[RMDB]
RNA sequence: GGGAACGACUCGAGUAGAGUCGAAAAUCCUCCCAUUGGGAGGUGGGAUCUGUGUCCCCUUUGCUUGAAUGUGGAUGAGCUCUGUGACUGCCUGAUCAAUGGAAUGUGGUGCAGAUGACUUGGCGCCCCAGCAAACCUAAUUCGUUAGGUUUGCUGGAAAAGAAACAACAACAACAAC
Reactivity to 2A3 in 0.01 (KOAc 150mM, MgCl2 10mM, bicine 150mM(pH8.5), 24C), signal-to-noise 4, nucleotides 027 to 126: u030c000c000u010c030c000c000a280u160u240g020g020g000a020g020g020u040g020g000g000a040u060c070u170g130u070g070u080c020c000c000c020u050u090u110g050c030u070u130g110a160a100u130g040u080g030g040a040u040g020a030g010c020u000c020u070g070u020g050a060c030u020g030c020c000u070g010a140u070c050a070a080u100g030g070a090a060u120g030u050g080g000u030g030c000a020g020a160u080g020a090c030u030u060g040g020c010g020c020c010
Reactivity to DMS in 0.01 (KOAc 150mM, MgCl2 10mM, bicine 150mM(pH8.5), 24C), signal-to-noise 4, nucleotides 027 to 126: u000c000c000u000c010c000c010a200u000u010g010g020g010a030g010g030u000g010g010g010a100u010c060u000g020u000g020u010c020c020c020c090u000u010u010g010c060u010u000g020a080a080u000g030u000g010g010a090u010g010a100g020c050u010c050u000g010u000g000a130c060u000g010c030c030u000g020a090u000c090a080a070u010g010g010a070a090u010g010u000g010g010u000g020c030a050g010a090u000g010a070c090u000u010g010g030c040g000c030c050